Structure probing data (2A3 and DMS) for a 177-nucleotide construct. The reactions ran in a buffer of 150 mM KOAc, 10 mM MgCl2 and 150 mM bicine (pH 8.5), at 24 C. It was measured as part of the RMDB library OK2TST. Values cover nucleotides 27 to 126.
[RMDB]
RNA sequence: GGGAACGACUCGAGUAGAGUCGAAAACUGCUGACCUAUGUGCCUCCCAGUCUGGGCACAGCGCACCAGGCGGGCGCUCUCACGCUGCUCACACUGGCACUGGGAUUGCUGCACACCCUGCGCCAUGCUACGCUGUCUCAUUCGUGAGACAGCGUAGAAAAGAAACAACAACAACAAC
Reactivity to 2A3 in 0.01 (KOAc 150mM, MgCl2 10mM, bicine 150mM(pH8.5), 24C), signal-to-noise 2, nucleotides 027 to 126: c020u040g010c020u060g040a110c000c020u040a110u170g060u060g010c010c020u090c000c060c000a000g030u000c020u010g040g000g030c020a040c050a120g050c060g000c040a260c020c010a040g130g130c060g040g030g000c000g000c000u000c010u030c020a110c070g070c080u060g020c000u010c020a070c000a010c040u040g040g000c010a010c010u000g010g000g030a020u030u080g040c040u070g000c030a020c010a000c030c000c000u020g020c020g000c010c010a070u130g020
Reactivity to DMS in 0.01 (KOAc 150mM, MgCl2 10mM, bicine 150mM(pH8.5), 24C), signal-to-noise 2, nucleotides 027 to 126: c090u000g020c030u000g010a090c010c020u000a070u020g040u000g010c030c020u000c090c040c050a040g000u020c110u010g040g000g000c030a090c130a080g040c100g000c010a160c050c050a080g050g030c070g000g000g000c130g000c010u000c090u000c110a100c170g010c130u000g010c010u000c030a070c140a110c090u000g000g000c050a030c080u010g020g000g010a110u000u000g000c050u000g000c030a020c050a050c000c030c010u000g000c050g000c020c040a090u000g000